[RMDB]
RNA sequence: GGGAACGACUCGAGUAGAGUCGAAAAUGGUGACCAAAUUGCUCAAAGUCCUGCGAUUGGUUCAGCUGGACAACGACAACUGCAUACAACAAUUGAUAGUUGAUAAGAACAAACUGCAGCAGCACAAAAAUGGUACGCAUUUCGAUGCGUACCAUUUAAAAGAAACAACAACAACAAC
Reactivity to 2A3 in 0.01 (KOAc 150mM, MgCl2 10mM, bicine 150mM(pH8.5), 24C), signal-to-noise 1, nucleotides 027 to 126: u070g060g000u040g010a020c000c000a030a040a060u000u100g000c020u010c060a070a110a040g020u010c000c010u030g000c010g150a150u050u150g160g000u100u060c080a050g000c030u020g000g000a010c010a020a030c010g060a000c010a030a040c010u010g040c020a010u060a120c030a060a040c020a020a110u120u090g070a140u150a120g060u020u050g070a080u070a140a070g100a070a000c020a040a110a030c010u030g000c010a020g000c010a000g000c070a020c000a020a130
Reactivity to DMS in 0.01 (KOAc 150mM, MgCl2 10mM, bicine 150mM(pH8.5), 24C), signal-to-noise 2, nucleotides 027 to 126: u010g000g020u000g000a150c060c020a070a070a200u030u000g000c020u000c110a060a160a140g020u000c050c040u000g010c020g010a160u000u030g020g030u050u000c050a170g010c030u000g000g020a110c070a040a120c160g030a140c080a020a040c030u000g010c040a050u000a140c080a010a060c050a050a150u000u000g010a100u000a040g010u000u000g000a100u020a090a130g000a100a050c100a070a030a080c140u000g000c020a010g010c100a020g010c040a020c160a050a020
Chemical mapping of a 177-nucleotide RNA with 2A3 and DMS.
Reactivities are given for positions 27 through 126.
It was measured as part of the RMDB library OK2TRN.
In probing experiments dimethyl sulfate is read out at A N1 and C N3, which are open when not base-paired.
The 2A3 profile rests on 842 reads.
For DMS the reverse transcriptase was MarathonRT.
The reactions ran in a buffer of 150 mM KOAc, 10 mM MgCl2 and 150 mM bicine (pH 8.5), at 24 C.